[RMDB]
The record gives the reactivity of an RNA of 177 nucleotides to 2A3 and DMS. The reactions ran in a buffer of 150 mM KOAc, 10 mM MgCl2 and 150 mM bicine (pH 8.5), at 24 C.
RNA sequence: GGGAACGACUCGAGUAGAGUCGAAAAGAUAUGGAACCAGGGAGUGCCAUUCGGAAACGAAUGAAGCACAUCGAUCUUGGUUCCUAAGUCAAAGAUUUGUAAUUAGGUUCGCCUAAUUACAAAUCAACCUGAACAUCGUGUUCGCACGAUGUUCAGGAAAAGAAACAACAACAACAAC
Reactivity to 2A3 in 0.01 (KOAc 150mM, MgCl2 10mM, bicine 150mM(pH8.5), 24C), signal-to-noise 2, nucleotides 027 to 126: g000a000u060a020u170g010g000a010a000c010c010a010g010g020g040a120g010u010g000c010c000a010u010u030c020g030g070a030a050a060c020g000a020a000u070g030a140a060g010c010a000c040a150u210c100g100a060u090c020u030u050g010g000u000u010c000c000u010a140a010g020u000c060a240a000a010g010a000u020u000u000g010u010a010a000u000u010a010g000g080u020u090c260g050c070c000u000a000a010u010u020a000c000a000a000a000u000c020a000a000
Reactivity to DMS in 0.01 (KOAc 150mM, MgCl2 10mM, bicine 150mM(pH8.5), 24C), signal-to-noise 1, nucleotides 027 to 126: g040a030u000a300u030g010g000a000a020c000c000a020g000g010g000a140g030u000g010c000c000a040u000u020c010g000g000a070a090a120c020g010a030a010u010g000a090a120g020c000a000c000a090u000c170g000a080u010c020u000u000g000g000u000u000c000c000u000a010a010g000u000c050a120a080a120g000a010u000u010u000g010u020a000a000u000u000a000g010g020u000u000c300g010c000c000u000a000a000u000u000a000c000a020a000a000u000c000a070a070